The record gives the reactivity of an RNA of 177 nucleotides to DMS and 2A3. The RNA was probed in 150 mM KOAc, 10 mM MgCl2 and 150 mM bicine (pH 8.5) at 24 C. Reactivities are given for positions 27 through 126. For 2A3, 3,625 sequencing reads were counted. It was measured as part of the RMDB library OK2TRN. 2A3 is a SHAPE reagent: it acylates the 2'-hydroxyl of flexible nucleotides of all four kinds. DMS adducts were read by reverse transcription with MarathonRT.
RNA sequence: GGGAACGACUCGAGUAGAGUCGAAAACAGAGGUGCUGUGGCACCCAGCUGGCAGGAAGGGUAGGGAGUGCCGGAAGCGACAUGCCAGGCCGUGAGCACACCUGGCCACUGGGCUCCAGCCGGCUGGGCUGUCAAUCUUGUUCGCAAGAUUGACAGCAAAAGAAACAACAACAACAAC
Reactivity to DMS in 0.01 (KOAc 150mM, MgCl2 10mM, bicine 150mM(pH8.5), 24C), signal-to-noise 3, nucleotides 027 to 126: c070a090g010a150g020g020u000g000c040u010g030u020g020g000c070a090c020c010c000a010g000c010u000g000g020c000a090g000g000a130a110g020g000g020u010a130g000g000g010a100g040u000g000c010c030g010g010a140a110g010c050g020a100c200a050u030g020c080c100a130g000g020c020c040g010u010g000a140g000c040a040c130a080c000c010u010g010g000c010c050a080c090u000g010g010g010c090u010c030c000a080g020c010c010g000g010c000u010g000g010
Reactivity to 2A3 in 0.01 (KOAc 150mM, MgCl2 10mM, bicine 150mM(pH8.5), 24C), signal-to-noise 3, nucleotides 027 to 126: c020a000g120a070g070g080u060g000c030u050g050u150g230g000c020a030c000c000c000a000g000c010u020g010g000c010a020g060g050a130a050g100g020g030u070a050g070g030g040a190g050u020g030c020c000g020g000a030a010g050c020g180a240c080a140u240g000c020c000a000g050g000c000c000g150u130g090a050g000c030a000c000a000c010c000u030g060g020c020c020a060c090u110g020g090g020c020u020c000c000a000g010c000c000g000g010c000u000g000g000